[RMDB]
RNA sequence: GGGAACGACUCGAGUAGAGUCGAAAAGCUUGCGAGUUCGCUCGCAAGCAAAAGUCAGAAAGAUGAAAAAGAUCAAUAAAGCGACUGACACGCAAAAUAAUAAAACUAUUCCCUUCGGGGAAUAGAAGUAACACAUAAACUUCGGUUUAUGUGUUACAAAAGAAACAACAACAACAAC
Reactivity to DMS in 0.01 (KOAc 150mM, MgCl2 10mM, bicine 150mM(pH8.5), 24C), signal-to-noise 1, nucleotides 027 to 126: g000c000u010u000g030c000g000a020g010u000u020c210g050c000u000c000g090c010a050a010g020c000a000a040a090a100g030u000c030a000g050a110a120a080g000a130u000g020a060a090a050a090a070g010a110u010c040a100a100u030a110a110a170g000c070g020a110c000u000g010a010c000a250c090g020c080a100a040a100a070u030a070a080u030a080a040a070a100c000u010a000u000u000c000c000c000u000u010c130g000g010g020g010a000a000u000a010g000a040a100
Reactivity to 2A3 in 0.01 (KOAc 150mM, MgCl2 10mM, bicine 150mM(pH8.5), 24C), signal-to-noise 2, nucleotides 027 to 126: g020c000u010u000g020c000g010a000g010u040u060c120g060c080u010c000g000c020a000a000g000c000a000a010a000a000g000u000c010a000g040a110a170a020g050a070u090g150a060a060a010a060a020g080a060u070c040a060a040u170a210a200a020g060c030g140a120c010u020g000a010c000a000c060g010c020a050a160a020a070u160a080a090u080a040a110a040a030c000u000a010u000u000c020c010c000u000u060c200g060g010g000g000a000a000u000a000g000a020a000
Structure probing data (DMS and 2A3) for a 177-nucleotide construct. The 2A3 profile rests on 1,978 reads. The reactions ran in a buffer of 150 mM KOAc, 10 mM MgCl2 and 150 mM bicine (pH 8.5), at 24 C. The data come from the RNA Mapping Database (RMDB), library M2PK50. The DMS profile rests on 951 reads.